[RMDB]
RNA sequence: GGGAACGACUCGAGUAGAGUCGAAAAGGGUUUGGAUUACAUCAAUAGUCACAUGAGCAGAAGUAAACAGAACAAGAAGUACUGCGGUUAUUCAAGUUCAAAGUUCACACUAUGGCAAUAAAUUGAACAUUCUUAUUGUCUUCGGACAAUAAGAAUGAAAAGAAACAACAACAACAAC
Reactivity to 2A3 in 0.01 (KOAc 150mM, MgCl2 10mM, bicine 150mM(pH8.5), 24C), signal-to-noise 3, nucleotides 027 to 126: g020g000g000u040u050u080g050g020a060u060u070a020c020a050u070c020a070a080u060a060g050u030c020a020c010a130u080g040a030g020c020a010g010a150a010g070u100a020a070a040c030a050g020a030a000c010a030a030g040a030a010g010u010a010c020u010g050c020g070g000u020u000a060u060u050c020a030a030g020u000u010c000a050a060a050g020u070u060c030a030c020a020c070u050a050u100g020g000c010a030a100u110a150a100a060u120u090g030a040a010
Reactivity to DMS in 0.01 (KOAc 150mM, MgCl2 10mM, bicine 150mM(pH8.5), 24C), signal-to-noise 6, nucleotides 027 to 126: g010g000g000u010u010u010g020g000a100u010u000a070c080a080u000c060a070a070u000a050g000u010c040a060c080a070u000g010a110g000c040a040g010a080a090g010u000a050a050a050c070a070g000a030a030c040a040a270g000a050a030g000u010a020c040u000g030c130g030g010u000u000a120u010u000c020a020a300g000u000u000c040a050a070a120g000u000u000c040a040c040a050c080u000a070u000g000g000c050a050a040u010a030a040a100u010u000g000a060a130